[RMDB]
RNA sequence: GGGAACGACUCGAGUAGAGUCGAAAACAGCAUAGCCCCGGGAUGGGGUGGGGGUAGACAGGGCCUUAGGACUUUCAUUUUUAAAAUGCUCACUCCACGGUGAAGAAACAGGUGAUGACUAUCCUGACAGGGAAAACAUUUUCGAAUGUUUUCCCUGAAAAGAAACAACAACAACAAC
Reactivity to DMS in 0.01 (KOAc 150mM, MgCl2 10mM, bicine 150mM(pH8.5), 24C), signal-to-noise 2, nucleotides 027 to 126: c070a080g020c080a110u010a160g020c030c010c010c050g000g050g020a170u000g030g010g050g040u000g000g000g010g000g000u000a030g020a160c120a050g010g010g030c020c040u000u000a100g000g010a110c040u000u010u030c030a040u000u000u040u000u020a050a070a080a080u010g000c160u000c060a060c050u000c080c120a070c110g000g030u000g000a070a050g010a070a050a100c080a040g000g000u000g020a170u000g000a100c060u010a030u000c020c010u010g000a270
Reactivity to 2A3 in 0.01 (KOAc 150mM, MgCl2 10mM, bicine 150mM(pH8.5), 24C), signal-to-noise 1, nucleotides 027 to 126: c030a010g110c020a130u090a070g050c030c000c000c010g090g160g110a170u190g040g060g000g000u010g000g000g010g000g000u080a010g010a030c010a060g130g000g050c010c020u060u170a010g130g000a010c000u120u140u020c060a080u000u000u020u040u190a020a140a060a070u040g060c000u000c040a010c010u090c090c040a050c030g020g000u020g010a080a070g020a070a120a010c030a030g000g040u050g010a040u060g020a040c000u030a020u090c060c000u000g000a050

Chemical mapping of a 177-nucleotide RNA with DMS and 2A3. Source: RMDB library OK2TST, as collected in RNAgym. Values cover nucleotides 27 to 126. The RNA was probed in 150 mM KOAc, 10 mM MgCl2 and 150 mM bicine (pH 8.5) at 24 C. For DMS, 1,548 sequencing reads were counted. DMS adducts were read by reverse transcription with MarathonRT.